[RMDB]
RNA sequence: GGGAACGACUCGAGUAGAGUCGAAAAGACUGCGCUCAGCCGCUUUGACAACGGCACCUGGACAGCCUACACGCCUGGCUUCGCCUACGAAGCGGCGUGUCGGGAAGGAACGCAGCGCGCAGCGUUCUACAAUUCGGUUGUUCGCAACCGAAUUGUAAAAAGAAACAACAACAACAAC
Reactivity to 2A3 in 0.01 (KOAc 150mM, MgCl2 10mM, bicine 150mM(pH8.5), 24C), signal-to-noise 1, nucleotides 027 to 126: g050a040c000u030g000c010g020c040u040c120a050g000c000c010g070c140u150u020u070g100a050c040a030a000c000g040g070c000a030c020c030u000g080g060a040c030a060g150c010c000u000a000c000a010c010g020c010c010u060g150g040c000u020u010c020g000c000c040u120a210c100g010a000a000g000c000g010g010c000g020u010g010u010c000g000g000g030a000a070g070g000a110a000c040g020c150a020g050c000g000c000g010c000a020g010c010g030u020u000c000
Reactivity to DMS in 0.01 (KOAc 150mM, MgCl2 10mM, bicine 150mM(pH8.5), 24C), signal-to-noise 3, nucleotides 027 to 126: g010a140c040u010g000c000g020c010u000c140a160g020c030c010g020c020u000u000u010g010a170c180a080a110c000g000g000c000a180c180c020u000g030g000a110c160a110g010c000c010u010a020c020a010c010g010c000c010u020g030g010c000u000u000c000g020c300c220u000a110c090g020a020a010g020c010g000g010c010g020u000g000u000c100g000g010g010a070a060g010g000a070a060c070g010c080a060g000c300g000c020g010c030a010g000c020g000u010u000c000